[RMDB]
RNA sequence: GGGAACGACUCGAGUAGAGUCGAAAAUCCUGCGUAAAUGCUGGUAUAGGGUGUACUUCGGAUUUCCGAGCCUAUAUUGGUUUUGAAAGGACCUUUAAGUCCCUACUAUACUACAUUGUACUAGCGUCAGAUUUUUUGGUUUCGACCAAAAAAUCUGAAAAGAAACAACAACAACAAC
Reactivity to 2A3 in 0.01 (KOAc 150mM, MgCl2 10mM, bicine 150mM(pH8.5), 24C), signal-to-noise 2, nucleotides 027 to 126: u000c000c000u000g000c000g030u040a030a000a010u030g070c100u050g070g000u000a010u000a000g020g000g000u080g100u190a020c010u010u060c070g000g050a060u000u090u060c010c010g000a000g020c000c000u100a130u020a040u250u140g000g000u010u030u020u000g020a040a000a000g110g100a160c020c000u040u110u100a020a010g010u000c010c000c000u020a250c020u000a000u000a010c000u010a010c000a000u040u040g130u060a030c070u090a030g090c030g090u020
Structure probing data (2A3) for a 177-nucleotide construct. Reactivities are given for positions 27 through 126. It was measured as part of the RMDB library RFM100. The reactions ran in a buffer of 150 mM KOAc, 10 mM MgCl2 and 150 mM bicine (pH 8.5), at 24 C. For 2A3, 1,305 sequencing reads were counted. For 2A3 the reverse transcriptase was SuperScript II with manganese.